The record gives the reactivity of an RNA of 177 nucleotides to DMS and 2A3.
RNA sequence: GGGAACGACUCGAGUAGAGUCGAAAAAGUGGAGCUUUUUGGUUAAGUACUUCCCCCUUGCGAGCAACAGGUGUCGUCCUGUUUGUUAGCCCUGCGCGGUUUCGUCCGUGUAGUGAUGGAGGGUGUGAUCUGGAAUUUAAUUCGUUAAAUUCCAGAUAAAAGAAACAACAACAACAAC
Reactivity to DMS in 0.01 (KOAc 150mM, MgCl2 10mM, bicine 150mM(pH8.5), 24C), signal-to-noise 9, nucleotides 027 to 126: a050g010u010g010g010a100g010c030u000u010u000u000u010g010g000u000u010a060a090g010u010a080c040u010u000c010c010c000c020c020u000u000g020c010g000a110g000c010a020a010c010a010g000g010u010g020u030c220g000u020c010c000u000g000u000u010u010g020u000u000a300g010c010c060c010u000g000c010g010c000g000g000u000u030u030c200g000u010c010c010g020u000g000u000a010g010u010g020a110u020g010g010a040g000g000g010u010g010u010g010
Reactivity to 2A3 in 0.01 (KOAc 150mM, MgCl2 10mM, bicine 150mM(pH8.5), 24C), signal-to-noise 9, nucleotides 027 to 126: a000g130u160g060g040a060g030c020u060u060u040u070u120g110g010u110u080a080a040g030u040a080c010u070u080c010c000c000c000c010u010u060g070c010g010a030g010c000a000a000c000a000g010g030u190g150u240c070g110u160c010c000u000g010u100u040u060g010u010u010a000g000c000c000c010u010g000c010g000c010g010g000u090u300u250c130g080u050c020c000g000u000g000u010a010g010u020g040a080u140g040g050a070g010g010g010u100g050u080g060
The data come from the RNA Mapping Database (RMDB), libraries RFM100 and RFMREP. Conditions: 150 mM KOAc, 10 mM MgCl2 and 150 mM bicine (pH 8.5), 24 C.